RNA sequence: GGGAACGACUCGAGUAGAGUCGAAAAAUGGAUAGAGGAGAAAUGCAUAUUGAUUUUGAUAAGAUGGCAGCAUGGGGAACAGAUACAAUAUUGUGCUCCUCAGAGUCUGCUGGCUUUAUCCGGCAUGGAUAUUGGCAUACUUCGGUAUGCCAAUAUCAAAAGAAACAACAACAACAAC
Reactivity to DMS in 0.01 (KOAc 150mM, MgCl2 10mM, bicine 150mM(pH8.5), 24C), signal-to-noise 5, nucleotides 027 to 126: a110u000g000g020a040u000a010g010a020g010g010a180g000a050a080a050u000g010c090a150u020a140u010u020g010a140u000u000u010u010g010a250u010a070a090g020a120u010g000g000c020a010g000c020a080u000g010g000g010g000a020a030c010a040g010a050u010a080c300a090a110u010a060u000u000g010u000g000c030u000c000c000u000c000a010g010a140g000u010c010u000g010c010u000g020g000c020u000u010u000a020u000c000c030g000g020c220a090u000g000
Reactivity to 2A3 in 0.01 (KOAc 150mM, MgCl2 10mM, bicine 150mM(pH8.5), 24C), signal-to-noise 4, nucleotides 027 to 126: a000u110g010g010a020u030a060g020a030g050g050a070g090a090a140a010u150g040c060a070u060a180u220u260g080a080u090u130u060u040g030a050u050a100a070g060a070u160g010g000c010a020g000c010a020u010g000g030g000g010a020a020c020a010g040a040u080a100c130a170a090u110a150u280u130g100u040g090c020u020c000c000u000c010a000g010a000g020u020c030u010g000c000u010g010g010c000u010u020u030a000u010c020c000g000g040c080a060u140g120